[RMDB]
RNA sequence: GGGAACGACUCGAGUAGAGUCGAAAAAGCGGUCCGGGGCGCCGGAGAACAUGUCGAAGUUAUCCGAGGUGCGCAGGCCGUCGGCGGCGGUGCCCGGGCCAUCGUAGGCCACCUGCGGGGCGCGCCAGGGGUAUUUAUUAUUCGUAAUAAAUACCCCAAAAGAAACAACAACAACAAC
Reactivity to DMS in 0.01 (KOAc 150mM, MgCl2 10mM, bicine 150mM(pH8.5), 24C), signal-to-noise 3, nucleotides 027 to 126: a150g000c050g010g010u000c010c030g010g000g000g030c010g020c010c000g000g010a070g010a030a050c050a100u020g010u010c210g020a120a120g010u000u000a050u000c010c010g000a230g020g020u000g010c020g020c030a140g010g010c040c020g020u000c080g010g010c100g020g010c010g030g010u000g010c010c000c020g010g010g010c000c010a000u000c120g010u000a110g010g020c030c030a120c120c090u000g020c080g020g000g010g010c010g030c030g010c020c020a110
Chemical mapping of a 177-nucleotide RNA with DMS. The reactions ran in a buffer of 150 mM KOAc, 10 mM MgCl2 and 150 mM bicine (pH 8.5), at 24 C.